[RMDB]
RNA sequence: GGGAACGACUCGAGUAGAGUCGAAAAUCGUCCGCAUGGGCCAGCGAGCAUCUGGAGAUCAAUUCACAUCAUUCGGCAACACACUGCUGAAUUCGAUCUACCAGUUUGCCGCCACUGCCGAGGCACUCGGCAUCUCCGCCGAAGAAGUUUGCCAACCGGAGUCUGCUUAAUUCGUUAAGCAGACUCCAAAAGAAACAACAACAACAAC
Reactivity to 2A3 in 0.01 (KOAc 150mM, MgCl2 10mM, bicine 150mM(pH8.5), 24C), signal-to-noise 2, nucleotides 027 to 156: u120c020g080u040c030c000g190c240a240u180g010g050g000c030c050a030g000c040g040a110g000c000a020u000c000u000g000g000a000g000a000u000c010a020a140u240u080c140a140c020a230u180c020a080u050u150c080g050g020c040a080a020c090a020c060a050c300u030g000c010u020g020a000a000u040u060c080g000a010u100c000u150a300c020c000a000g000u040u050u030g000c000c020g000c000c010a000c000u000g000c000c000g060a130g000g000c000a010c080u040c000g000g010c000a050u020c070u050c030c050g000c000c000g020a040a000g060a080a020g060u210u300u040g050c050c000a050a000c090c070